An RNA of 177 nucleotides, treated with 2A3 and DMS and read out base by base. Source: RMDB library TTRDEL, as collected in RNAgym. The DMS profile rests on 3,502 reads. The 2A3 profile rests on 6,214 reads. DMS adducts were read by reverse transcription with MarathonRT.

RNA sequence: GGGAACGACUCGAGUAGAGUCGAAAAGAUAUGGAACUUUGUAGGGAGCUACUCGGAAACGAGAAUAGCAUCGAUCUACUUAGUUCCUAAGUCGUGGGUUCCUGACCUCUUCGGAGGUCAGGAACAAGAGGGUACAAUAGUUCGCUAUUGUACCCUCAAAAGAAACAACAACAACAAC
Reactivity to 2A3 in 0.01 (KOAc 150mM, MgCl2 10mM, bicine 150mM(pH8.5), 24C), signal-to-noise 3, nucleotides 027 to 126: g000a020u020a040u090g000g000a000a000c010u020u040u060g010u000a020g180g300g010a010g020c000u010a010c010u010c000g010g040a020a030a000c010g010a000g050a290a280u060a030g020c020a160u200c060g240a240u080c000u020a000c000u010u000a000g000u000u020c000c000u000a030a000g030u000c020g020u140g100g170g000u000u020c010c000u010g010a010c010c010u020c020u120u090c300g150g000a000g000g000u000c010a010g000g000a000a000c000a000a020
Reactivity to DMS in 0.01 (KOAc 150mM, MgCl2 10mM, bicine 150mM(pH8.5), 24C), signal-to-noise 3, nucleotides 027 to 126: g000a030u000a250u010g000g000a010a010c000u000u000u000g010u000a010g000g010g000a050g040c000u000a030c000u000c000g010g010a040a050a120c010g000a010g010a110a120u000a030g000c010a250u000c100g010a110u020c000u000a000c000u000u000a010g010u000u000c000c010u010a020a060g000u000c020g010u000g010g010g020u000u000c000c000u000g000a010c000c020u000c000u000u000c180g040g000a010g000g000u000c000a020g010g000a000a000c020a030a060